[RMDB]
RNA sequence: GGGAACGACUCGAGUAGAGUCGAAAAGUUGCCGUUCGGGACGUUGACGAAAUGGAGCGAUUUGACCCGUCUUGAAACACGGACCAAGGAGUCUAACAUGUGUGCAAGUGUUAGGGUGUGGAAACCCCGACCUCCAAGAAUUCGUUCUUGGAGGUCGAAAAGAAACAACAACAACAAC
Reactivity to DMS in 0.01 (KOAc 150mM, MgCl2 10mM, bicine 150mM(pH8.5), 24C), signal-to-noise 7, nucleotides 027 to 126: g010u000u010g010c010c020g000u000u000c030g010g010g000a100c100g010u000u020g000a140c050g010a030a040a060u030g010g020a110g000c030g010a090u000u000u010g000a100c050c020c010g000u010c030u010u010g010a100a070a080c140a060c010g010g010a070c020c030a100a130g000g010a170g020u010c010u000a030a050c070a050u000g030u010g000u010g000c030a050a090g010u000g010u010u010a040g000g000g020u000g020u010g010g010a090a110a100c010c000c020
Reactivity to 2A3 in 0.01 (KOAc 150mM, MgCl2 10mM, bicine 150mM(pH8.5), 24C), signal-to-noise 5, nucleotides 027 to 126: g020u020u030g060c020c000g030u000u030c020g010g040g070a090c090g040u060u110g060a060c010g010a020a040a080u090g070g010a080g030c040g030a040u040u010u100g030a050c010c000c000g000u020c010u000u050g040a060a120a020c040a010c050g020g020a000c010c000a080a130g140g010a130g080u000c000u010a070a030c020a120u160g030u000g010u020g070c030a040a020g020u020g040u130u140a060g010g030g010u040g010u030g060g060a060a080a060c000c000c000